[RMDB]
RNA sequence: GGGAACGACUCGAGUAGAGUCGAAAACGUACCCAAGGUGAAAGCUCCUUCUCUCGCAAUGUGUAACUCAUGAUUCUCAUGACCCCUGGUUGGAGAGAUCCGGACUAGGAGCCAGGGGGCCUCUGAUAAAGCCAGACGCACUUCGGUGCGUCUGGAACAUAUUCUUGACCUUCGGGUCAAGAAUAUGAAAAGAAACAACAACAACAAC
Reactivity to 2A3 in 0.01 (KOAc 150mM, MgCl2 10mM, bicine 150mM(pH8.5), 24C), signal-to-noise 3, nucleotides 027 to 156: c030g020u050a050c000c010c010a020a020g000g000u060g070a300a030a030g020c020u020c000c020u060u050c010u000c010u010c020g050c130a110a180u100g070u040g020u130a070a030c010u000c040a020u060g040a200u230u000c100u040c080a020u060g020a070c000c000c000c010u010g050g000u030u100g110g010a030g000a010g010a050u050c100c080g070g040a060c060u080a100g000g000a000g020c020c000a010g000g000g000g000g030c010c010u040c030u020g080a120u160a180a130a060g070c000c000a010g000a000c000g000c000a000c000u040u080c220g090g000u000g000c010g000u010c000u000g000g000a000a000
Reactivity to DMS in 0.01 (KOAc 150mM, MgCl2 10mM, bicine 150mM(pH8.5), 24C), signal-to-noise 2, nucleotides 027 to 156: c080g020u000a270c000c000c020a070a160g000g030u010g000a090a090a110g020c030u000c010c010u000u020c010u000c010u000c000g010c040a060a070u010g020u000g000u010a090a090c020u020c030a070u000g000a110u000u010c040u000c000a110u000g010a090c010c000c020c000u000g020g050u000u010g010g010a090g000a140g000a070u000c030c030g000g040a220c060u000a060g000g000a110g000c000c020a060g010g010g020g000g010c030c030u000c040u000g020a140u010a060a110a180g000c000c000a020g000a040c040g000c000a010c010u000u000c300g090g030u000g030c000g030u000c000u000g010g020a000a050
Conditions: 150 mM KOAc, 10 mM MgCl2 and 150 mM bicine (pH 8.5), 24 C.
The record gives the reactivity of an RNA of 207 nucleotides to 2A3 and DMS.
Reactivities are rounded to 0.1 and cut off at 0 and 3.
For 2A3 the reverse transcriptase was SuperScript II with manganese.
For DMS the reverse transcriptase was MarathonRT.